This 177-nucleotide RNA was probed chemically with 2A3 and DMS. DMS adducts were read by reverse transcription with MarathonRT. Values cover nucleotides 27 to 126. The reactions ran in a buffer of 150 mM KOAc, 10 mM MgCl2 and 150 mM bicine (pH 8.5), at 24 C. High DMS reactivity at an A or C suggests that its Watson-Crick edge is free. The DMS profile rests on 2,572 reads.
[RMDB]
RNA sequence: GGGAACGACUCGAGUAGAGUCGAAAAUUGAUCUAGUCAAAGCCCUCAUAUACUUAAAUUAGGUUUGGCUUUGUGGAGCUAGCCACCUUAUAACCGGCCUAGUUAAGACAACUCACUUGGGAGAUCAUCGUAUAGUCCAUUUCGAUGGACUAUACGAAAAAGAAACAACAACAACAAC
Reactivity to 2A3 in 0.01 (KOAc 150mM, MgCl2 10mM, bicine 150mM(pH8.5), 24C), signal-to-noise 3, nucleotides 027 to 126: u070u070g020a020u010c030u070a030g130u060c060a080a070a040g000c010c020c000u060c060a120u240a030u050a170c010u040u090a060a130a200u080u020a000g110g000u040u040u300g010g000c000u130u040u060g030u020g040g010a040g080c050u060a010g060c020c010a010c020c020u170u140a150u050a110a020c000c000g000g010c000c000u020a010g040u020u040a030a010g030a070c030a070a060c050u060c080a050c060u050u080g040g030g000a040g010a010u060c010a040
Reactivity to DMS in 0.01 (KOAc 150mM, MgCl2 10mM, bicine 150mM(pH8.5), 24C), signal-to-noise 4, nucleotides 027 to 126: u010u010g000a030u010c010u010a140g020u010c050a090a060a190g010c020c000c030u010c170a040u000a120u010a110c030u000u000a030a030a100u000u000a030g000g010u000u000u020g100g020c070u000u000u010g030u000g000g000a190g010c120u000a060g010c020c020a040c020c300u000u000a060u020a030a110c040c010g010g020c010c010u000a010g020u010u010a050a030g010a130c150a060a120c060u010c050a080c110u000u000g000g010g010a030g020a030u000c090a080